An RNA of 177 nucleotides, treated with DMS and 2A3 and read out base by base.
[RMDB]
RNA sequence: GGGAACGACUCGAGUAGAGUCGAAAAACAGUCACCGAUCGGAAAAGAGAUUGAGGCGACGUGUCGAGCGAUCGGUGUCGCCGGACGAGUCGUCGUCAUGUCGACUCUCAUCGUCCCGACGAUCGCGCAUAAUGGGCUCCUUCGGGAGCCCAUUAUGAAAAGAAACAACAACAACAAC
Reactivity to DMS in 0.01 (KOAc 150mM, MgCl2 10mM, bicine 150mM(pH8.5), 24C), signal-to-noise 2, nucleotides 027 to 126: a080c090a010g000u010c090a180c130c010g020a030u000c030g010g040a070a010a080a150g040a110g000a040u010u020g000a090g060g000c000g000a010c000g030u000g000u000c080g000a120g010c080g020a040u010c020g040g050u030g010u000c000g030c060c050g000g000a020c180g000a030g020u000c050g020u000c000g020u000c140a080u050g010u010c010g000a070c000u000c010u000c050a110u010c140g010u010c010c020c010g000a150c010g000a010u010c020g030c120g000
Reactivity to 2A3 in 0.01 (KOAc 150mM, MgCl2 10mM, bicine 150mM(pH8.5), 24C), signal-to-noise 2, nucleotides 027 to 126: a000c050a000g050u050c000a050c040c020g050a090u130c070g030g100a000a060a130a020g170a020g010a040u110u130g060a050g020g000c010g000a030c040g030u100g090u070c090g010a070g070c050g000a010u030c010g000g050u050g060u000c030g030c050c030g050g030a030c040g040a060g100u000c020g020u000c000g120u070c180a110u300g030u040c000g000a010c000u000c010u000c030a080u030c040g060u000c040c000c000g030a000c010g020a040u010c000g020c010g010
The data come from the RNA Mapping Database (RMDB), library OK1LIB.
Conditions: 150 mM KOAc, 10 mM MgCl2 and 150 mM bicine (pH 8.5), 24 C.